[RMDB]
RNA sequence: GGGAACGACUCGAGUAGAGUCGAAAACAGGAAGCUGACUAUUAAGGGGAAACAAAAGUGUUAUUAGGAGUCCUGCUGUCACAGUGGUUUGAGCAUCCUGAGCCCUGAGGCUGUUUCUGGUGGUGGACCAUCACAACUAGUUCGCUAGUUGUGAUGGAAAAGAAACAACAACAACAAC
Reactivity to DMS in 0.01 (KOAc 150mM, MgCl2 10mM, bicine 150mM(pH8.5), 24C), signal-to-noise 3, nucleotides 027 to 126: c040a050g000g030a060a050g020c020u010g000a090c050u010a060u000u020a110a060g000g040g000g010a170a090a060c110a030a060a060a090g020u000g010u000u000a090u000u010a080g010g000a100g000u000c030c010u000g020c050u000g020u010c070a040c130a060g020u000g000g000u000u010u000g010a060g010c050a070u000c020c040u000g010a090g000c010c000c020u000g000a120g010g000c030u000g000u000u010u010c020u010g020g030u000g000g000u000g010g020a220
Reactivity to 2A3 in 0.01 (KOAc 150mM, MgCl2 10mM, bicine 150mM(pH8.5), 24C), signal-to-noise 3, nucleotides 027 to 126: c000a010g010g040a010a010g000c020u010g060a070c020u050a050u190u100a060a040g010g070g010g050a030a120a000c050a020a110a060a030g130u160g060u220u090a130u060u130a080g060g000a000g030u030c000c020u020g050c000u020g020u170c040a000c010a150g020u040g050g030u050u130u190g090a020g020c000a030u030c010c020u040g030a040g030c000c000c020u030g020a040g050g030c050u020g020u000u040u050c030u010g070g000u050g060g060u050g040g040a040
Source: RMDB library RFMREP, as collected in RNAgym. The record gives the reactivity of an RNA of 177 nucleotides to DMS and 2A3. 2A3 is a SHAPE reagent: it acylates the 2'-hydroxyl of flexible nucleotides of all four kinds. 2A3 adducts were read by reverse transcription with SuperScript II with manganese. For DMS the reverse transcriptase was MarathonRT. The RNA was probed in 150 mM KOAc, 10 mM MgCl2 and 150 mM bicine (pH 8.5) at 24 C.